This 177-nucleotide RNA was probed chemically with DMS and 2A3. It was measured as part of the RMDB library RFM100. For 2A3 the reverse transcriptase was SuperScript II with manganese.
[RMDB]
RNA sequence: GGGAACGACUCGAGUAGAGUCGAAAACUCUGCGCACGCACGCAACAAACAGAGAAGAGUCCAGUCCGGAGGGCAGAAAGCGCAGGAGGGCCUCCCCGCGCCGGCAGGAGAAGCCGGCGGGUGCAAGCGUGCAUAGGGACUUCGGUCCCUAUGCACGAAAAGAAACAACAACAACAAC
Reactivity to DMS in 0.01 (KOAc 150mM, MgCl2 10mM, bicine 150mM(pH8.5), 24C), signal-to-noise 1, nucleotides 027 to 126: c060u000c010u000g010c000g000c000a070c060g010c100a000c070g000c090a160a130c080a070a110a190c050a030g000a100g010a180a040g030a060g030u040c000c000a260g000u010c090c030g020g010a060g030g000g000c060a100g010a030a000a170g000c060g000c050a010g000g000a070g020g000g000c040c060u000c030c000c040c070g010c020g000c030c060g100g000c040a030g000g060a240g000a090a020g000c000c000g030g010c010g000g020g000u000g000c030a020a120g020
Reactivity to 2A3 in 0.01 (KOAc 150mM, MgCl2 10mM, bicine 150mM(pH8.5), 24C), signal-to-noise 2, nucleotides 027 to 126: c040u010c010u010g000c010g000c030a010c050g000c000a000c010g060c030a030a070c070a030a260a000c020a020g150a050g040a260a000g020a000g100u010c000c000a080g050u070c020c030g100g010a010g010g010g000c020a010g260a130a140a040g000c000g000c000a020g070g080a040g020g030g070c000c000u000c000c010c000c000g040c000g000c000c000g020g000c030a050g000g250a180g000a100a010g020c000c000g000g000c000g000g000g000u120g050c120a080a000g100